[RMDB]
RNA sequence: GGGAACGACUCGAGUAGAGUCGAAAAGUAUUGAUGCCACCGUGACGGCUCAAUCACACAAGUGCCAACGAUAACGAGGCGCUCGCUAUUGCUGCGUAACUGACGGCCUGACGGUCUGACGUUACAAAAAACGAAAAGUGGUUCGCCACUUUUCGAACGAAAUAUGAGGGUUCGCCCUCAUAUUUCGAAAAGAAACAACAACAACAAC
Reactivity to DMS in 0.01 (KOAc 150mM, MgCl2 10mM, bicine 150mM(pH8.5), 24C), signal-to-noise 2, nucleotides 027 to 156: g040u000a050u000u010g020a080u000g030c000c020a110c000c140g000u030g010a090c130g000g010c010u010c020a040a080u000c070a120c060a070c080a050a060g030u000g030c020c000a110a190c090g000a200u000a120a120c070g020a300g010g010c050g000c020u020c020g070c000u000a050u010u030g020c000u010g010c050g000u010a010a030c020u010g000a300c300g000g030c050c020u020g000a120c210g050g030u000c040u140g010a300c300g030u000u000a000c010a000a010a090a040a070a140c000g010a020a020a010a030g040u000g000g010u000u010c300g030c020c000a000c010u000u000u000u000c000g010a020a110
Reactivity to 2A3 in 0.01 (KOAc 150mM, MgCl2 10mM, bicine 150mM(pH8.5), 24C), signal-to-noise 4, nucleotides 027 to 156: g050u050a000u020u010g030a040u270g010c010c020a080c080c110g130u120g090a080c080g010g000c000u000c010a010a030u040c010a020c010a000c010a130a020g020u020g050c020c010a140a060c150g120a190u160a200a100c080g020a080g030g000c020g000c010u030c040g050c040u080a110u240u300g070c100u110g020c040g030u010a020a000c010u010g020a010c000g020g000c010c000u160g110a080c130g010g000u000c010u030g010a010c020g000u020u020a000c020a000a030a000a000a000a000c030g000a000a000a000a000g000u000g050g010u050u090c140g030c060c000a000c000u000u000u000u000c000g000a070a010